[RMDB]
RNA sequence: GGGAACGACUCGAGUAGAGUCGAAAAAUGGAUCACUGAUCUCUAGGAUCACGACAGCUGAUCUGAUCCGCACAUGCAGUACUAGUGAUCUGAUCGUACGUACUAGGGUACCUGUCAUGUGAGAUGCCUCCGCGAUUACGUUCGCGUAAUCGCGGAGAAAAGAAACAACAACAACAAC
Reactivity to 2A3 in 0.01 (KOAc 150mM, MgCl2 10mM, bicine 150mM(pH8.5), 24C), signal-to-noise 1, nucleotides 027 to 126: a020u120g000g010a030u060c010a010c110u080g050a080u050c030u030c090u050a100g000g100a030u070c030a020c100g070a000c010a040g050c100u070g020a100u000c000u000g060a040u000c010c000g000c010a030c000a000u030g000c000a010g000u070a050c020u030a010g030u020g040a050u040c050u050g040a070u120c030g070u160a040c020g030u000a030c030u020a030g200g080g030u060a030c000c000u050g110u150c020a030u050g020u030g020a040g000a040u150g040c000
Reactivity to DMS in 0.01 (KOAc 150mM, MgCl2 10mM, bicine 150mM(pH8.5), 24C), signal-to-noise 1, nucleotides 027 to 126: a090u000g030g000a000u000c020a030c050u000g010a060u000c040u020c140u000a170g000g000a030u000c050a050c180g050a060c100a240g060c180u030g000a080u000c020u020g000a020u000c000c000g010c180a080c030a010u000g000c000a030g000u000a070c030u020a060g000u000g000a040u010c010u020g000a150u000c100g010u010a020c110g000u010a080c060u000a050g000g000g020u000a100c100c010u000g000u020c060a010u000g050u000g000a090g000a080u000g020c070
Structure probing data (2A3 and DMS) for a 177-nucleotide construct. The RNA was probed in 150 mM KOAc, 10 mM MgCl2 and 150 mM bicine (pH 8.5) at 24 C. Values cover nucleotides 27 to 126. 2A3 adducts were read by reverse transcription with SuperScript II with manganese. It was measured as part of the RMDB library OK2TRN. For DMS, 1,038 sequencing reads were counted. DMS adducts were read by reverse transcription with MarathonRT.